[RMDB]
RNA sequence: GGGAACGACUCGAGUAGAGUCGAAAAAAGCCAAGCGUGGUGGUGCGCGCCUGUAGUCCUAGCUACUCAGGAGGCUGAGGCAGGAGGAUCACCGGAGCCCAGGAGUUUGAGGCUGCAGUGAGCUAGGAUCAUGCCACUGCACUCCAGCCUGGGCGAAGCCGACUGAGUAGUUCGCUACUCAGUCGGCAAAAGAAACAACAACAACAAC
Reactivity to 2A3 in 0.01 (KOAc 150mM, MgCl2 10mM, bicine 150mM(pH8.5), 24C), signal-to-noise 1, nucleotides 027 to 156: a000a000g170c040c020a040a080g000c030g040u030g000g010u000g020g030u060g110c060g000c020g020c030c040u080g080u110a030g030u010c020c010u000a020g040c010u090a060c010u000c050a050g010g060a020g250g000c100u050g000a020g010g020c030a010g000g070a020g010g000a040u050c000a000c010c060g060g060a040g000c000c000c000a020g020g020a050g040u000u080u070g020a020g040g000c070u030g000c000a010g000u000g010a100g030c030u060a010g040g060a180u190c060a080u230g010c000c000a000c000u000g010c000a000c010u000c000c000a010g010c030c000u000g000g050g000c000g000a000a000
The data come from the RNA Mapping Database (RMDB), library OK3TST.
This 207-nucleotide RNA was probed chemically with 2A3.
Values cover nucleotides 27 to 156.
Reactivities are rounded to 0.1 and cut off at 0 and 3.
The reactions ran in a buffer of 150 mM KOAc, 10 mM MgCl2 and 150 mM bicine (pH 8.5), at 24 C.
For 2A3, 849 sequencing reads were counted.